[RMDB]
RNA sequence: GGGAACGACUCGAGUAGAGUCGAAAACCACAUCCAGAGGACCCCUUCGACGAACAGAAGACCCUGGACCGGGAGGGAAUAGCCCAUAGUACAAGGGGAGAUGCUAGGAGUCGGGAGAGGUCAGAACGCGCUGCCGAGUUCGCUCGGCAGAAAAGAAACAACAACAACAAC
Reactivity to 2A3 in 0.01 (KOAc 150mM, MgCl2 10mM, bicine 150mM(pH8.5), 24C), signal-to-noise 5, nucleotides 027 to 129: c000c010a060c020a130u090c060c030a020g010a140g110g060a060c000c020c010c040u030u100c040g080a060c020g030a080a010c010a020g080a100a040g040a060c030c000c020u030g010g010a000c030c010g010g010g030a020g020g030g030a130a080u070a090g030c010c000c000a050u100a030g110u110a060c040a070a020g000g010g010g000a060g010a030u100g030c000u030a040g010g020a010g010u020c000g000g020g000a040g020a020g000g000u030c020a020g020a050a010c020g000c000g000
Reactivity to DMS in 0.01 (KOAc 150mM, MgCl2 10mM, bicine 150mM(pH8.5), 24C), signal-to-noise 5, nucleotides 027 to 129: c030c000a110c250a130u030c100c000a090g000a180g010g020a070c090c080c060c010u070u000c000g060a100c000g030a170a110c120a000g010a000a000g020a170c060c030c010u020g060g000a110c090c110g020g010g000a020g030g020g070a050a030u030a130g000c060c000c040a090u050a080g050u050a090c080a100a080g070g000g000g010a100g020a030u040g000c030u000a050g020g010a110g000u000c050g020g010g050a070g010a060g000g020u050c050a070g030a000a000c090g010c090g020

Source: RMDB library 15KLIB, as collected in RNAgym. An RNA of 170 nucleotides, treated with 2A3 and DMS and read out base by base. For 2A3, 8,579 sequencing reads were counted. 2A3 adducts were read by reverse transcription with SuperScript II with manganese. Conditions: 150 mM KOAc, 10 mM MgCl2 and 150 mM bicine (pH 8.5), 24 C.